[RMDB]
This 177-nucleotide RNA was probed chemically with 2A3 and DMS. DMS adducts were read by reverse transcription with MarathonRT. For 2A3 the reverse transcriptase was SuperScript II with manganese. Values cover nucleotides 27 to 126. The DMS profile rests on 1,338 reads. Reactivities are rounded to 0.1 and cut off at 0 and 3.
RNA sequence: GGGAACGACUCGAGUAGAGUCGAAAAAUGUUCAAUGCCUGCUGUAUGGUACUUGAGCAGAGGUGCCCAACCAGUGUUGAGGCCAGGUCAUCCUGGAUACUUUAAACCCUUGGCUGUCCAAAACCAACAGUUGGACACAAUUCGUUGUGUCCAACUGAAAAGAAACAACAACAACAAC
Reactivity to 2A3 in 0.01 (KOAc 150mM, MgCl2 10mM, bicine 150mM(pH8.5), 24C), signal-to-noise 1, nucleotides 027 to 126: a000u000g010u010u000c050a040a020u040g050c020c020u050g120c220u290g100u280a120u120g040g000u050a040c050u060u010g000a000g080c000a010g000a030g000g000u040g070c000c000c000a000a020c010c020a030g000u100g010u160u080g050a050g040g030c000c000a000g010g010u140c060a070u150c030c010u000g000g030a030u030a030c000u000u010u030a130a140a060c010c010c000u050u040g020g070c000u010g010u060c040c020a040a000a020a140c000c020a000a080
Reactivity to DMS in 0.01 (KOAc 150mM, MgCl2 10mM, bicine 150mM(pH8.5), 24C), signal-to-noise 2, nucleotides 027 to 126: a120u000g010u000u010c020a020a020u000g000c000c000u010g010c190u010g000u020a060u000g010g040u000a020c300u000u000g010a020g000c000a060g030a160g000g000u010g000c020c010c000a160a060c050c000a130g040u020g010u010u000g010a130g010g000c000c020a000g000g010u000c220a160u000c030c020u000g010g000a070u000a040c070u000u000u000a130a050a090c090c030c020u010u020g000g030c070u000g000u010c100c070a060a060a090a090c080c080a060a240